Conditions: 150 mM KOAc, 10 mM MgCl2 and 150 mM bicine (pH 8.5), 24 C. The record gives the reactivity of an RNA of 177 nucleotides to DMS and 2A3. Reactivities are given for positions 27 through 126.
RNA sequence: GGGAACGACUCGAGUAGAGUCGAAAAUGUGCGUCGCGUUGUACCUGCGGGCGAAGAUGCGGUCCAUGGCGUCGCGGGCGUCCUUGCCGAUGCAGUCCCCCAGGUCCACGCGCGAGAGCGGGUACUCUGAAUAGGUCAGAUUCGUCUGACCUAUUCAAAAAGAAACAACAACAACAAC
Reactivity to DMS in 0.01 (KOAc 150mM, MgCl2 10mM, bicine 150mM(pH8.5), 24C), signal-to-noise 5, nucleotides 027 to 126: u040g020u030g010c000g010u030c010g020c000g020u000u000g000u030a000c000c000u000g010c300g010g000g000c140g020a060a090g010a100u020g010c000g000g000u010c160c090a100u000g020g000c010g010u000c020g020c250g010g010g010c000g010u000c010c030u000u000g000c030c030g000a040u020g010c150a200g000u020c000c000c000c030c000a000g000g000u000c030c080a020c110g000c010g000c020g000a040g000a120g030c040g000g000g000u010a080c060u010c070
Reactivity to 2A3 in 0.01 (KOAc 150mM, MgCl2 10mM, bicine 150mM(pH8.5), 24C), signal-to-noise 7, nucleotides 027 to 126: u200g070u120g020c020g040u120c030g020c020g030u040u090g030u070a040c000c000u020g000c140g020g000g030c140g040a070a010g110a100u250g020c030g010g010u100c090c040a060u120g010g000c010g010u040c050g010c110g180g050g000c010g030u160c000c030u010u070g000c000c010g050a070u110g050c030a020g120u180c000c000c010c000c010a000g020g010u000c010c020a020c020g000c000g000c000g000a010g010a010g030c050g000g030g030u050a060c030u020c020